[RMDB]
RNA sequence: GGGAACGACUCGAGUAGAGUCGAAAAUUGGACCGUCGUAAGACUACCUUAAGCGAAAGCAUUUGCCAAAGAUGUUUUCAUUAAUCAAGAACGAAAGUUAGAGGUUCGAAGGCGAUCAGAUACCGCCCUAAGAUCUCCUGUUCGCAGGAGAUCUUAGAAAAGAAACAACAACAACAAC
Reactivity to DMS in 0.01 (KOAc 150mM, MgCl2 10mM, bicine 150mM(pH8.5), 24C), signal-to-noise 5, nucleotides 027 to 126: u020u000g010g010a040c050c050g000u000c010g020u020a050a140g000a050c110u020a100c080c070u000u000a040a070g010c150g000a000a010a020g000c000a000u000u000u010g010c240c240a080a110a040g000a010u010g010u000u000u010u000c010a070u010u010a030a090u020c160a110a130g030a060a050c060g020a070a070a060g010u010u000a070g000a160g000g010u010u010c020g000a070a190g010g000c000g010a040u010c070a080g000a060u000a100c090c020g000c030c030
Reactivity to 2A3 in 0.01 (KOAc 150mM, MgCl2 10mM, bicine 150mM(pH8.5), 24C), signal-to-noise 5, nucleotides 027 to 126: u050u050g050g000a010c030c000g050u030c000g030u100a070a040g020a040c020u060a040c040c000u050u060a060a010g060c040g100a010a000a000g000c000a010u030u030u110g130c070c060a130a120a010g030a010u000g000u000u020u000u000c000a020u010u060a040a070u100c080a040a060g060a120a020c070g040a140a030a020g030u050u070a060g000a030g110g010u010u020c030g020a020a010g000g000c010g030a020u060c040a010g050a110u080a080c030c030g040c020c000

Source: RMDB libraries RFM100 and RFMREP, as collected in RNAgym.
Structure probing data (DMS and 2A3) for a 177-nucleotide construct.
Reactivities are rounded to 0.1 and cut off at 0 and 3.
DMS adducts were read by reverse transcription with MarathonRT.
2A3 adducts were read by reverse transcription with SuperScript II with manganese.
Conditions: 150 mM KOAc, 10 mM MgCl2 and 150 mM bicine (pH 8.5), 24 C.
In probing experiments dimethyl sulfate is read out at A N1 and C N3, which are open when not base-paired.